[RMDB]
RNA sequence: GGGAACGACUCGAGUAGAGUCGAAAACAGUGGUCGUCGAAGCGCUGCGAUACCGAAGCGCUGGCCUUGGGACGACUCGGUCGAACGUGGCAGCCAAAGCAACAGGCGCACGAAGGCGGUCCAAGGAGAUUUAGCAGUGGUUCGCCACUGCUAAAUCAAAAGAAACAACAACAACAAC
Reactivity to 2A3 in 0.01 (KOAc 150mM, MgCl2 10mM, bicine 150mM(pH8.5), 24C), signal-to-noise 3, nucleotides 027 to 126: c020a020g070u060g070g000u050c010g000u030c070g100a060a000g010c030g010c050u060g050c050g070a080u130a240c100c060g060a080a040g010c000g000c050u020g050g000c000c000u030u070g080g020g000a030c030g010a010c020u010c040g040g060u040c010g020a050a060c030g010u030g220g000c040a050g000c000c020a100a070a050g050c030a010a100c020a080g010g000c020g020c000a000c000g020a130a100g060g020c030g000g000u030c020c000a020a020g110g040a110
Reactivity to DMS in 0.01 (KOAc 150mM, MgCl2 10mM, bicine 150mM(pH8.5), 24C), signal-to-noise 3, nucleotides 027 to 126: c060a110g030u000g000g040u010c030g010u010c040g010a210a010g000c010g010c000u000g000c030g010a260u010a140c210c030g010a090a030g010c020g020c000u010g010g000c050c020u000u000g010g020g010a080c020g000a030c010u000c040g010g000u000c020g010a040a120c050g000u000g010g010c010a160g010c020c040a050a090a180g000c150a080a090c160a140g000g010c020g000c000a020c030g000a120a120g000g000c010g010g000u010c030c010a060a060g020g010a240
Chemical mapping of a 177-nucleotide RNA with 2A3 and DMS. 2A3 adducts were read by reverse transcription with SuperScript II with manganese. Conditions: 150 mM KOAc, 10 mM MgCl2 and 150 mM bicine (pH 8.5), 24 C.